Overview: Chemical mapping of a 177-nucleotide RNA with 2A3.

RNA sequence: GGGAACGACUCGAGUAGAGUCGAAAAGAUAUGGAGCGUUCCAGGGAGAUCUACUAUCGGAAACGAUAGAGAUCAUCGAUCUGGACUGCGCUCCUAAGUCAAAACGUAUAUGCUUCGGCAUAUACGAGGCAGCAGAGAGGUUCGCCUCUCUGCUGCCAAAAGAAACAACAACAACAAC
Reactivity to 2A3 in 0.01 (KOAc 150mM, MgCl2 10mM, bicine 150mM(pH8.5), 24C), signal-to-noise 1, nucleotides 027 to 126: g010a010u070a080u300g000g000a020g000c030g130u130u000c030c000a020g000g150g030a150g000a060u030c020u300a300c010u010a300u000c000g010g020a030a110a030c000g000a010u030a000g000a010g000a040u000c000a000u300c060g050a030u060c000u000g020g030a030c100u090g000c030g000c010u010c000c000u000a100a000g020u040c060a000a000a140a220c000g020u010a030u010a000u010g000c010u030u090c300g200g000c000a020u020a000u000a000c000g000a040